[RMDB]
The data come from the RNA Mapping Database (RMDB), library TTRDEL. Chemical mapping of a 177-nucleotide RNA with DMS and 2A3. For 2A3, 2,448 sequencing reads were counted. Values cover nucleotides 27 to 126. The RNA was probed in 150 mM KOAc, 10 mM MgCl2 and 150 mM bicine (pH 8.5) at 24 C. DMS adducts were read by reverse transcription with MarathonRT. 2A3 adducts were read by reverse transcription with SuperScript II with manganese.
RNA sequence: GGGAACGACUCGAGUAGAGUCGAAAAGAUAUGGACGAUAGAAGAGGCAUCCCUAUGUCGGAAACGACAUAGAACUGAACUACCUCCUAUCGUCCUAAGUCAAAACGAAUGUCUUCGGACAUUCGAACCACUAGCUCCAGUUCGCUGGAGCUAGUGGAAAAGAAACAACAACAACAAC
Reactivity to DMS in 0.01 (KOAc 150mM, MgCl2 10mM, bicine 150mM(pH8.5), 24C), signal-to-noise 1, nucleotides 027 to 126: g000a080u000a040u010g020g040a040c000g030a010u000a000g030a180a130g000a010g050g040c050a130u000c250c150c010u000a000u010g000u010c000g000g000a050a000a100c020g000a020c000a040u000a030g000a020a050c120u030g030a050a160c250u030a210c000c010u000c000c020u040a000u000c000g010u000c000c000u000a010a000g020u000c000a110a120a000a180c070g020a050a010u000g040u020c000u000u010c220g000g020a040c000a020u000u010c030g010a030a100
Reactivity to 2A3 in 0.01 (KOAc 150mM, MgCl2 10mM, bicine 150mM(pH8.5), 24C), signal-to-noise 2, nucleotides 027 to 126: g020a000u010a020u050g010g000a020c010g000a020u010a000g230a300a080g000a050g020g000c060a180u070c000c000c000u050a010u010g010u000c000g030g000a000a010a000c000g000a020c010a000u000a000g010a020a030c140u140g070a080a080c160u160a160c190c000u020c000c000u000a000u000c020g010u000c000c000u000a000a000g000u010c000a030a080a020a100c020g000a000a000u000g000u000c010u080u090c300g140g000a010c000a000u010u000c000g000a020a050